Source information:
Structure probing data (2A3) for a 177-nucleotide construct. 2A3 adducts were read by reverse transcription with SuperScript II with manganese. The reactions ran in a buffer of 150 mM KOAc, 10 mM MgCl2 and 150 mM bicine (pH 8.5), at 24 C. Reactivities are given for positions 27 through 126. Reactivities are rounded to 0.1 and cut off at 0 and 3.
[RMDB]
RNA sequence: GGGAACGACUCGAGUAGAGUCGAAAACACAUCCCAGAGUCCUUGUCGAUGGCGUCUACGUCGACCACAAGAAGUUCUCGAUUUGGAAUCAAGAACACAAGUCGCUUCAGAAACUGGUCUCUUGGUGUGACGCCUAGCCGUUCGCGGCUAGGCGUCAAAAAGAAACAACAACAACAAC
Reactivity to 2A3 in 0.01 (KOAc 150mM, MgCl2 10mM, bicine 150mM(pH8.5), 24C), signal-to-noise 2, nucleotides 027 to 126: c130a010c000a010u100c000c000c000a030g000a000g020u020c020c020u040u020g050u040c000g010a020u070g020g030c150g110u000c060u170a030c080g040u000c090g030a060c000c010a060c040a030a070g080a090a000g000u120u010c020u050c080g040a070u000u050u230g150g090a010a090u180c050a120a030g050a140a000c060a040c010a050a130g040u000c000g000c010u040u080c040a100g090a120a000a050c060u150g000g030u070c000u000c070u060u010g060g000u000g060